RNA sequence: GGGAACGACUCGAGUAGAGUCGAAAAGCCUCGCACCGCCGUACUCAUUUUUACCUCGAGUAUGGUGGCCGUGGAAUGGUGGUUUUUUAUGCAGUCGGGAAUGAAAGCAGCUGUAAUUUCCUUGCAUUACAAAACUCACUUUCGAGUGAGUUUUGUAAAAAGAAACAACAACAACAAC
Reactivity to DMS in 0.01 (KOAc 150mM, MgCl2 10mM, bicine 150mM(pH8.5), 24C), signal-to-noise 3, nucleotides 027 to 126: g000c010c020u000c010g020c050a230c010c000g000c000c010g000u010a000c010u020c010a160u000u040u050u010u030a100c280c120u030c130g000a000g020u000a000u000g020g000u000g000g000c300c040g000u000g000g000a040a070u020g040g010u010g000g000u000u000u000u010u000u000a050u020g000c040a010g010u050c160g000g010g040a060a030u000g020a180a100a160g000c040a040g030c040u000g010u010a100a090u000u000u000c020c000u030u000g000c020a070u000
Reactivity to 2A3 in 0.01 (KOAc 150mM, MgCl2 10mM, bicine 150mM(pH8.5), 24C), signal-to-noise 4, nucleotides 027 to 126: g040c010c000u000c010g040c030a050c000c000g000c020c000g000u020a010c000u000c010a100u040u020u150u200u300a190c060c090u140c120g010a000g000u000a010u020g020g000u020g000g000c000c020g020u060g050g110a130a110u140g070g020u050g020g010u050u000u000u000u000u090a040u040g000c040a030g080u150c050g020g050g100a070a060u110g030a150a070a050g110c060a020g010c010u040g030u050a080a090u000u000u030c000c000u030u020g020c020a030u000

The record gives the reactivity of an RNA of 177 nucleotides to DMS and 2A3. Conditions: 150 mM KOAc, 10 mM MgCl2 and 150 mM bicine (pH 8.5), 24 C. Values cover nucleotides 27 to 126. As a SHAPE reagent, 2A3 marks flexible, mostly unpaired nucleotides at the ribose 2'-OH. For 2A3, 1,854 sequencing reads were counted.